The record gives the reactivity of an RNA of 177 nucleotides to DMS and 2A3. High DMS reactivity at an A or C suggests that its Watson-Crick edge is free. The DMS profile rests on 4,924 reads.

RNA sequence: GGGAACGACUCGAGUAGAGUCGAAAAACCUGCUUCUGAGUUGCCCAGGAGACCACUGGCAGAUGUCCCGGCGAAGAGAAGAGACACAUUGUUGGAAGAAGCAGCCCAUGACAGCUCCCCUUCCUGGGACUUUAAUGUACUUCGGUACAUUAAAGUCAAAAGAAACAACAACAACAAC
Reactivity to DMS in 0.01 (KOAc 150mM, MgCl2 10mM, bicine 150mM(pH8.5), 24C), signal-to-noise 4, nucleotides 027 to 126: a090c150c000u000g010c010u000u000c030u000g010a140g000u000u000g000c030c010c020a070g000g000a090g010a070c050c070a050c050u010g000g000c020a070g000a080u010g000u000c010c010c010g000g010c060g010a080a070g010a120g010a080a080g000a070g000a060c050a060c100a080u000u000g010u000u000g010g000a160a050g010a060a040g020c020a030g010c010c020c030a090u000g010a100c090a070g010c040u000c010c000c010c080u000u000c010c010u000g010g000
Reactivity to 2A3 in 0.01 (KOAc 150mM, MgCl2 10mM, bicine 150mM(pH8.5), 24C), signal-to-noise 2, nucleotides 027 to 126: a000c000c020u000g000c010u010u020c020u040g130a110g080u040u040g050c030c000c000a020g010g070a050g030a030c020c030a040c050u060g040g000c020a010g040a210u050g030u040c010c020c000g030g020c060g050a100a050g040a040g010a200a000g010a020g040a010c010a000c010a150u110u150g070u060u080g060g020a080a040g030a060a010g020c010a000g010c000c020c000a030u090g050a030c060a010g050c010u000c010c020c010c000u030u010c000c020u000g060g040